[RMDB]
RNA sequence: GGGAACGACUCGAGUAGAGUCGAAAACGGUAGCAAUACCGCCAGAGGUCAUUUACGUCAGUUAAGCCCUGUCGGCGUCGCGACGCCAGGGUCGAAAAUCUAGCGAAUCGCCGUAGUGCAGCGUGUUCGUCCGCGUCGCUGCGGUUAAAUCAAAAGACGUCUUAUUACCCUUCGGGGUAAUAAGACGAAAAGAAACAACAACAACAAC
Reactivity to 2A3 in 0.01 (KOAc 150mM, MgCl2 10mM, bicine 150mM(pH8.5), 24C), signal-to-noise 2, nucleotides 027 to 156: c010g000g000u010a000g000c020a020a110u010a020c000c010g000c000c030a080g060a040g010g080u110c070a100u060u100u250a070c070g060u050c040a140g030u090u070a020a000g000c020c010c020u010g010u030c000g000g060c010g010u000c070g020c020g000a010c010g000c010c000a000g010g000g020u010c000g050a000a000a010a010u120c180u170a000g000c000g020a020a000u020c000g000c000c000g010u020a000g010u010g040c060a010g010c040g010u080g050u060u120c100g040u030c010c040g030c000g040u040c020g000c010u000g000c000g000g020u000u010a010a010a010u150c110a020a050a050a050g070a060
Notes
This 207-nucleotide RNA was probed chemically with 2A3. The RNA was probed in 150 mM KOAc, 10 mM MgCl2 and 150 mM bicine (pH 8.5) at 24 C. For 2A3 the reverse transcriptase was SuperScript II with manganese. It was measured as part of the RMDB library ARCHII.